Description
The record gives the reactivity of an RNA of 207 nucleotides to DMS and 2A3. The reactions ran in a buffer of 150 mM KOAc, 10 mM MgCl2 and 150 mM bicine (pH 8.5), at 24 C.

RNA sequence: GGGAACGACUCGAGUAGAGUCGAAAAGAACUUUGGCCGGCUCGGAAUAGAAUCAGGGGGUUCAAACUGCCCACUGGCAGAAAGGAUUAUAGCAAAUGCGUACCCUAUUGCAAUACAGCCCGGCCAACAUAGACUACUCUAUUCGUAGAGUAGUCAAUAGUAUAUCUGUGUUCGCACAGAUAUACUAAAAAGAAACAACAACAACAAC
Reactivity to DMS in 0.01 (KOAc 150mM, MgCl2 10mM, bicine 150mM(pH8.5), 24C), signal-to-noise 2, nucleotides 027 to 156: g010a100a110c060u000u000u000g000g040c020c010g010g020c020u000c040g000g000a190a090u000a110g010a180a080u000c040a080g020g010g000g040g010u000u000c080a040a100a240c090u000g000c010c010c070a090c140u000g020g060c030a080g020a110a090a130g000g020a130u000u000a100u010a150g010c030a070a090a080u000g010c050g000u000a090c010c000c010u000a090u000u000g030c030a050a150u000a120c060a050g010c070c010c020g050g010c010c000a010a000c040a130u000a100g010a040c000u000a000c000u000c000u000a090u000u010c170g030u000a020g020a020g010u000a000g020u000c000a020a050
Reactivity to 2A3 in 0.01 (KOAc 150mM, MgCl2 10mM, bicine 150mM(pH8.5), 24C), signal-to-noise 4, nucleotides 027 to 156: g020a060a010c010u040u010u020g000g010c000c000g010g010c030u060c100g060g030a100a070u160a170g050a070a020u180c090a100g040g000g000g010g000u020u000c070a220a170a010c020u020g000c000c020c060a170c220u180g000g000c010a010g020a050a140a010g020g010a030u100u040a050u200a150g020c040a130a190a160u270g010c040g030u080a060c000c000c010u010a030u010u060g070c050a020a030u030a130c020a030g000c020c030c000g000g000c000c000a000a000c000a000u040a010g000a000c000u000a000c000u010c000u010a020u050u030c060g070u050a000g010a000g000u000a000g000u000c000a000a000